The record gives the reactivity of an RNA of 177 nucleotides to DMS and 2A3.
Reactivities are given for positions 27 through 126.
For 2A3, 4,500 sequencing reads were counted.
For DMS, 5,210 sequencing reads were counted.
[RMDB]
RNA sequence: GGGAACGACUCGAGUAGAGUCGAAAAUGAGAAGCAUUCGUGCUUCUCAGAAAUGCUGGCCAAAGAGGACCUGGGGGUGUCUGGGCUGCUAAACUCAUCAGCUAACCGCGAUCUUCGGAUCGCGGAAACGACUACAUUGAUUCGUCAAUGUAGUCGUAAAAGAAACAACAACAACAAC
Reactivity to DMS in 0.01 (KOAc 150mM, MgCl2 10mM, bicine 150mM(pH8.5), 24C), signal-to-noise 4, nucleotides 027 to 126: u000g010a020g000a000a010g000c000a040u000u010c190g010u000g020c000u000u010c000u010c000a010g000a090a100a090u010g010c040u000g020g000c040c040a050a100a130g000a120g000g010a060c060c050u000g010g010g000g000g010u010g010u000c030u000g010g010g010c030u000g010c060u000a060a070a120c050u000c050a070u010c080a050g000c130u010a100a210c010c010g010c000g000a010u000c000u000u010c170g010g010a010u000c000g010c000g000g000a000a040
Reactivity to 2A3 in 0.01 (KOAc 150mM, MgCl2 10mM, bicine 150mM(pH8.5), 24C), signal-to-noise 3, nucleotides 027 to 126: u050g000a000g000a010a010g000c020a020u040u140c210g070u060g010c000u000u010c010u000c000a000g000a000a100a010u120g000c040u070g040g000c020c020a130a150a130g100a090g010g000a060c030c040u080g020g020g000g000g030u020g010u000c030u050g020g030g000c020u000g000c020u040a040a050a040c040u030c060a120u030c040a090g040c060u060a100a080c000c000g000c010g010a010u020c000u020u020c110g060g010a000u000c020g000c010g000g020a000a000